[RMDB]
RNA sequence: GGGAACGACUCGAGUAGAGUCGAAAACUAAUCUAAACUUUAUAAACGGCACUUCCUGCGUGUCCAUGCCCGCGGGCCUGGUCUUGUCAUAGUGCUGACAUUUGUAGUUCCUUGACUUUCGUUCUCUCUCGGAAUUGGCAUUCGUGCCAAUUCCGAGAAAAGAAACAACAACAACAAC
Reactivity to 2A3 in 0.01 (KOAc 150mM, MgCl2 10mM, bicine 150mM(pH8.5), 24C), signal-to-noise 1, nucleotides 027 to 126: c070u100a130a080u180c110u110a150a020a120c000u050u180u000a180u040a050a130a050c010g010g020c030a000c000u000u000c000c000u000g000c030g020u070g000u100c000c000a000u060g020c010c010c010g020c230g090g030g000c010c000u000g050g000u000c000u040u220g030u050c020a020u070a300g000u000g000c030u030g030a050c040a050u140u090u180g050u000a030g000u000u050c010c000u000u110g060a010c040u000u000u000c000g000u000u000c000u000c010u020
Structure probing data (2A3) for a 177-nucleotide construct.
The 2A3 profile rests on 362 reads.
The RNA was probed in 150 mM KOAc, 10 mM MgCl2 and 150 mM bicine (pH 8.5) at 24 C.
Values cover nucleotides 27 to 126.